Structure probing data (DMS and 2A3) for a 177-nucleotide construct. As a SHAPE reagent, 2A3 marks flexible, mostly unpaired nucleotides at the ribose 2'-OH. Reactivities are given for positions 27 through 126. The RNA was probed in 150 mM KOAc, 10 mM MgCl2 and 150 mM bicine (pH 8.5) at 24 C. Source: RMDB library OK1LIB, as collected in RNAgym. For DMS the reverse transcriptase was MarathonRT.

RNA sequence: GGGAACGACUCGAGUAGAGUCGAAAAAGGACAUAAAGGGACUCACUAUCUAGCAGCCCCUAGCGGUACCUACUGGGCAUGCAACACCGGGCUAACCCCAUGCAUCUCCAUGGCAGUGCUCAACUGGGACUGCCGAAUUGUUCGCAAUUCGGCAGUCAAAAGAAACAACAACAACAAC
Reactivity to DMS in 0.01 (KOAc 150mM, MgCl2 10mM, bicine 150mM(pH8.5), 24C), signal-to-noise 1, nucleotides 027 to 126: a050g000g000a000c050a130u040a000a060a080g000g000g000a130c000u000c030a020c260u070a110u000c220u000a130g000c060a030g070c090c030c000c090u010a060g000c100g000g000u000a100c000c000u000a160c060u060g000g000g010c050a020u070g000c080a010a110c080a020c190c070g000g000g020c000u000a170a060c150c120c000c000a010u000g000c080a050u000c130u000c020c020a060u040g000g030c040a020g010u000g000c120u000c040a040a130c190u000g000g080
Reactivity to 2A3 in 0.01 (KOAc 150mM, MgCl2 10mM, bicine 150mM(pH8.5), 24C), signal-to-noise 2, nucleotides 027 to 126: a050g070g010a030c040a010u190a130a130a030g060g000g020a030c010u000c070a030c010u150a110u300c050u080a000g000c020a010g000c030c020c000c000u020a020g050c060g170g000u120a140c000c010u020a030c010u070g000g060g000c030a030u000g000c000a060a040c020a020c110c060g020g020g040c000u060a190a210c010c000c000c000a010u050g020c020a100u040c000u030c110c010a030u040g050g000c080a030g000u020g020c010u020c120a100a070c040u110g030g060